This 177-nucleotide RNA was probed chemically with DMS. DMS adducts were read by reverse transcription with MarathonRT.
[RMDB]
RNA sequence: GGGAACGACUCGAGUAGAGUCGAAAACACAGCCAGAUGGUGAAGGCCAAGUCCCCACCCCCCCUGUGGCCUCCACAACACAGAAGAAGUCCUGCCCUUCCUGAGACCUUAUAGUAGGACUCCUGACAAACGGAUCUAACUUCGGUUAGAUCCGUUUAAAAGAAACAACAACAACAAC
Reactivity to DMS in 0.01 (KOAc 150mM, MgCl2 10mM, bicine 150mM(pH8.5), 24C), signal-to-noise 1, nucleotides 027 to 126: c120a080c050a120g030c040c070a120g000a110u010g030g030u020g010a020a040g000g010c030c060a050a140g010u010c000c000c000c120a290c010c010c000c020c000c050c000u000g000u000g010g000c010c000u010c020c030a000c050a080a140c150a050c120a030g000a040a050g020a020a060g020u000c020c010u000g010c020c040c050u030u000c020c020u000g030a100g000a110c070c060u000u000a100u010a120g030u010a040g010g020a070c010u000c050c030u010g030a210c220